[RMDB]
RNA sequence: GGGAACGACUCGAGUAGAGUCGAAAAGAAGCACGGCUUGUGUGUGAUCCUUUUGGAUUGCACUGUAUAUCCUACGCUGUGCGAAAGUAGGACCAUUGUGGCGAGAGCCACUUACAGUACAGCUUAUUAUGACGCAUCGCUGUACGAACGAUGCCGAGAUGGAUUACUAUUUCGAUAGUAAUCCAUCAAAAGAAACAACAACAACAAC
Reactivity to 2A3 in 0.01 (KOAc 150mM, MgCl2 10mM, bicine 150mM(pH8.5), 24C), signal-to-noise 9, nucleotides 027 to 156: g110a070a010g010c010a010c020g020g020c050u170u130g060u010g000u000g000u010g160a000u010c010c000u090u200u160u300g010g000a000u000u010g000c000a000c000u010g060u020a190u030a020u080c010c020u050a040c100g000c010u020g010u030g010c010g010a030a020a000g120u130a030g010g030a010c040c030a100u050u150g000u000g000g010c000g010a050g000a010g040c000c000a000c000u010u050a040c020a010g000u000a010c000a000g010c020u100u030a060u170u110a130u300g140a070c090g020c110a060u080c060g000c020u020g010u040a010c000g000a040a010c050g030a030u090g030c030c030g050a060
Reactivity to DMS in 0.01 (KOAc 150mM, MgCl2 10mM, bicine 150mM(pH8.5), 24C), signal-to-noise 6, nucleotides 027 to 156: g010a140a160g020c020a040c020g030g020c000u000u000g020u010g020u000g040u010g010a020u000c000c010u000u000u000u000g040g020a040u000u000g010c000a010c000u010g020u000a100u000a100u000c080c040u000a100c100g020c020u000g020u000g010c010g010a070a050a170g020u010a100g010g000a130c040c050a170u000u000g010u000g020g030c000g020a300g010a300g010c000c000a010c010u000u000a040c080a100g030u000a040c020a110g010c040u000u000a150u010u000a150u010g020a170c130g020c030a030u000c050g020c010u000g020u000a110c140g020a030a030c030g000a050u000g010c000c030g000a230